[RMDB]
RNA sequence: GGGAACGACUCGAGUAGAGUCGAAAACUCGAGGAGCAUAGAGGCGUGCGACCUCGACAUGAAUCAGCCUCAAUUAGAAGGUACUCGUGAGAGCGAAGUACCGAGAAUUGGUCGACGAUCACCGGCGAUCUUUCGACCUUGAAUUAAGCCGGGAAAACGAUACUCGUAUGUUCGCAUACGAGUAUCGAAAAGAAACAACAACAACAAC
Reactivity to 2A3 in 0.01 (KOAc 150mM, MgCl2 10mM, bicine 150mM(pH8.5), 24C), signal-to-noise 4, nucleotides 027 to 156: c020u030c010g000a000g000g000a010g000c010a020u050a040g010a000g010g000c030g010u010g000c030g130a300c000c000u000c020g020a020c020a120u300g090a110a120u160c060a080g000c010c000u010c000a000a060u140u070a070g090a180a030g000g000u000a000c020u010c000g010u020g050a070g010a010g050c010g050a140a020g020u010a000c020c020g000a040g000a020a160u140u140g000g010u010c010g000a010c020g000a010u000c000a020c130c000g000g000c000g000a000u000c000u060u120u020c010g000a000c000c000u030u140g030a040a030u160u140a070a020g000c000c010g000g000g010a020a070a000a000
Reactivity to DMS in 0.01 (KOAc 150mM, MgCl2 10mM, bicine 150mM(pH8.5), 24C), signal-to-noise 2, nucleotides 027 to 156: c050u000c000g030a030g000g010a300g000c000a010u000a070g030a120g000g050c040g090u000g000c050g000a100c030c010u000c000g010a050c150a120u010g000a110a150u010c110a120g000c020c010u000c010a110a110u010u000a110g000a160a250g000g020u000a030c000u000c000g020u030g000a300g000a270g000c000g000a090a080g030u000a000c010c010g010a010g010a050a110u020u000g000g010u000c000g010a030c300g040a060u000c040a110c000c000g020g000c000g000a060u000c010u000u010u010c020g000a070c010c030u000u010g010a050a100u010u000a110a150g030c040c000g060g020g020a030a050a060a230
Source: RMDB library OK3TST, as collected in RNAgym. Chemical mapping of a 207-nucleotide RNA with 2A3 and DMS. For DMS the reverse transcriptase was MarathonRT. For 2A3 the reverse transcriptase was SuperScript II with manganese. The reactions ran in a buffer of 150 mM KOAc, 10 mM MgCl2 and 150 mM bicine (pH 8.5), at 24 C.